Notes
This 207-nucleotide RNA was probed chemically with 2A3.
[RMDB]
RNA sequence: GGGAACGACUCGAGUAGAGUCGAAAAUCUUGGAUCUCGUCCACCUGGGCUUGAAUCUGCUCUUCCAAGCAUUUUAUCAUCUGCUUCUUAAACAGAUCACGAAUAUCGCGGUCUUGUACGGCGUUUGGCGCGGGAGGUGCGCUGGCGGACGGCCCGCGGGCUAUGCGGUAUUCGUACCGCAUAGCCCAAAAGAAACAACAACAACAAC
Reactivity to 2A3 in 0.01 (KOAc 150mM, MgCl2 10mM, bicine 150mM(pH8.5), 24C), signal-to-noise 1, nucleotides 027 to 156: u040c000u030u060g020g010a020u000c030u000c070g000u000c010c000a030c040c070u030g020g000g040c030u100u130g060a040a050u000c060u110g090c030u030c040u130u000c020c010a020a090g010c040a100u010u110u040u250a150u300c060a000u020c010u100g000c010u200u070c000u090u230a020a120a140c040a000g000a060u060c000a020c100g090a180a090u270a240u300c010g000c020g000g040u010c010u050u070g000u040a080c020g000g060c030g060u020u130u210g090g000c000g020c000g000g040g070a070g000g050u070g020c020g090c010u000g010g010c040g040g010a060c010g040g000c000c000c000g000c090